[RMDB]
RNA sequence: GGGAACGACUCGAGUAGAGUCGAAAAGAUAGAUAGUACUCGUAAAAACUCUCUUUCGCAGGCCGCGUAUUUUGAGAGACGAAGCCGUGAAGUAGCGAAAGCUACGACGAAGCGCGUGGUCGGCCGAUGCGCGAACAGCAUCAGGUACGAGUACGAAAAUAUAUUACUACUUCGGUAGUAAUAUAUUAAAAGAAACAACAACAACAAC
Reactivity to DMS in 0.01 (KOAc 150mM, MgCl2 10mM, bicine 150mM(pH8.5), 24C), signal-to-noise 3, nucleotides 027 to 156: g000a190u000a110g010a160u000a110g010u010a000c000u000c010g040u000a020a070a070a060a090c020u000c010u000c020u000u000u000c050g050c040a090g010g030c030c030g000c020g020u000a050u000u000u000u020g010a100g000a070g000a200c080g010a080a130g050c000c020g020u000g020a100a230g020u000a000g030c010g010a130a100a240g020c010u000a040c010g010a130c030g010a100a070g010c050g010c020g050u010g030g010u000c000g000g010c000c030g010a010u000g010c000g030c030g020a090a110c120a150g010c000a040u010c020a060g040g010u000a000c020g000a040g010u000a020c000g000a080a070
Reactivity to 2A3 in 0.01 (KOAc 150mM, MgCl2 10mM, bicine 150mM(pH8.5), 24C), signal-to-noise 3, nucleotides 027 to 156: g060a040u240a030g050a030u080a060g000u000a000c010u010c010g000u020a010a010a030a140a130c030u030c000u000c000u010u070u070c050g000c050a050g090g060c050c020g000c010g010u050a140u030u120u100u130g030a030g000a000g120a070c060g040a020a000g010c000c010g060u100g100a160a040g000u000a000g000c010g010a060a050a020g000c000u000a010c000g020a010c020g070a080a020g030c020g010c020g030u010g000g060u030c000g000g000c010c020g000a010u010g010c030g000c060g050a100a060c050a070g000c010a010u030c030a050g020g010u020a000c000g000a000g000u000a000c000g000a010a000
An RNA of 207 nucleotides, treated with DMS and 2A3 and read out base by base. DMS adducts were read by reverse transcription with MarathonRT. The DMS profile rests on 7,122 reads. It was measured as part of the RMDB library OK3TST. The RNA was probed in 150 mM KOAc, 10 mM MgCl2 and 150 mM bicine (pH 8.5) at 24 C. For 2A3, 3,086 sequencing reads were counted.